[RMDB]
RNA sequence: GGGAACGACUCGAGUAGAGUCGAAAACGGACGCCUUUAGAAGAAGAGGCUAGGUGGUAUUCCGGUGUGGGAUACUUGGUAAUAUGUAACGCUAAUUGCAUAAGAUUGUAGGACGGAAUUUACAGUCAAAACGGUCCUGCGUUCGCGCAGGACCGAACCUAGUUAUCGGCUUCGGCCGAUAACUAGGAAAAGAAACAACAACAACAAC
Reactivity to 2A3 in 0.01 (KOAc 150mM, MgCl2 10mM, bicine 150mM(pH8.5), 24C), signal-to-noise 1, nucleotides 027 to 156: c010g030g060a030c080g020c020c000u110u050u040a090g010a300a000g000a030a020g010a060g000g000c020u020a070g020g050u000g010g030u020a000u040u000c030c030g120g080u300g050u070g050g050g000a010u010a010c030u010u070g020g020u070a070a020u100a060u160g040u060a030a020c040g000c120u050a060a040u070u070g020c030a020u010a200a110g000a040u160u040g020u000a030g000g080a030c010g010g000a060a000u050u100u060a060c000a000g000u020c030a000a000a040a150c000g000g000u000c000c010u000g000c000g000u010u040c140g000c030g000c030a020g000g000a020c000c000g000a000a000
Notes:
The data come from the RNA Mapping Database (RMDB), library M2RFPK. Structure probing data (2A3) for a 207-nucleotide construct.